[RMDB]
RNA sequence: GGGAACGACUCGAGUAGAGUCGAAAAAGCGCCGUGACCAGGUUGGCCCCGUUCAGGACCAUCUCGCCGUACGUCACCGGCACGUCGGCUUCGGUGUCCUCCACUUUCAGGAAGGACUGCAGGAGGCAGGGACUACUUGAUUCGUCAAGUAGUCCCUAAAAGAAACAACAACAACAAC
Reactivity to DMS in 0.01 (KOAc 150mM, MgCl2 10mM, bicine 150mM(pH8.5), 24C), signal-to-noise 4, nucleotides 027 to 126: a070g000c060g010c010c010g010u010g000a050c020c040a090g010g030u030u010g000g020c030c030c020c060g000u030u050c220a170g000g000a090c040c010a080u020c090u020c160g010c040c040g030u050a060c130g020u010c050a130c110c040g010g000c020a040c020g000u010c030g000g010c010u020u010c020g010g010u040g000u000c000c000u000c000c000a210c160u020u020u010c140a120g000g030a100a050g000g010a010c010u030g020c090a060g000g000a030g000g030c220
Reactivity to 2A3 in 0.01 (KOAc 150mM, MgCl2 10mM, bicine 150mM(pH8.5), 24C), signal-to-noise 5, nucleotides 027 to 126: a000g060c060g020c010c010g030u050g030a130c000c040a050g000g030u070u060g060g030c030c010c010c030g050u130u140c080a080g000g050a040c030c010a040u050c060u040c070g030c010c010g090u170a050c030g000u000c020a030c110c010g050g010c050a020c020g070u070c020g050g010c040u070u020c070g050g000u040g030u040c000c000u010c000c000a090c040u120u220u180c060a060g080g020a090a070g050g020a070c050u070g010c050a050g020g070a000g030g000c000
Structure probing data (DMS and 2A3) for a 177-nucleotide construct. 2A3 adducts were read by reverse transcription with SuperScript II with manganese. For DMS the reverse transcriptase was MarathonRT. For 2A3, 4,947 sequencing reads were counted. Values cover nucleotides 27 to 126. Source: RMDB library OK1LIB, as collected in RNAgym.